[RMDB]
RNA sequence: GGGAACGACUCGAGUAGAGUCGAAAAGAUAUGGACCGUAACCUUUUGACGCGAUUCGGGUCGGAAACGACCUCCUUUCGCGAUAAGGCCCGGUCCUAAGUCAAAGACAAGUGUUCGCACUUGUCAAGAGUCUUAUUGUGUUCGCACAAUAAGACUCAAAAGAAACAACAACAACAAC
Reactivity to DMS in 0.01 (KOAc 150mM, MgCl2 10mM, bicine 150mM(pH8.5), 24C), signal-to-noise 3, nucleotides 027 to 126: g000a040u000a190u000g000g010a030c000c000g010u000a140a210c000c000u000u000u010u010g020a160c060g000c000g000a030u000u000c110g010g020g030u000c000g010g000a040a070a110c010g000a010c000c000u040c100c050u010u000u000c000g040c010g020a080u000a000a030g000g000c170c160c020g030g010u000c000c010u000a000a020g000u000c050a070a120a140g010a020c000a000a000g020u000g010u000u020c280g010c000a010c000u000u010g000u000c000a050a110
Reactivity to 2A3 in 0.01 (KOAc 150mM, MgCl2 10mM, bicine 150mM(pH8.5), 24C), signal-to-noise 3, nucleotides 027 to 126: g030a010u050a020u110g010g020a000c000c000g030u040a040a080c010c020u030u050u120u300g300a230c100g010c010g010a010u100u080c070g010g000g000u000c010g020g000a050a040a010c010g020a010c000c010u240c000c020u110u100u020c000g000c000g010a020u040a040a000g020g000c020c010c030g000g010u000c000c000u000a040a000g000u000c040a180a010a020g010a010c000a000a000g000u010g030u060u180c300g090c120a010c000u010u020g000u000c010a000a020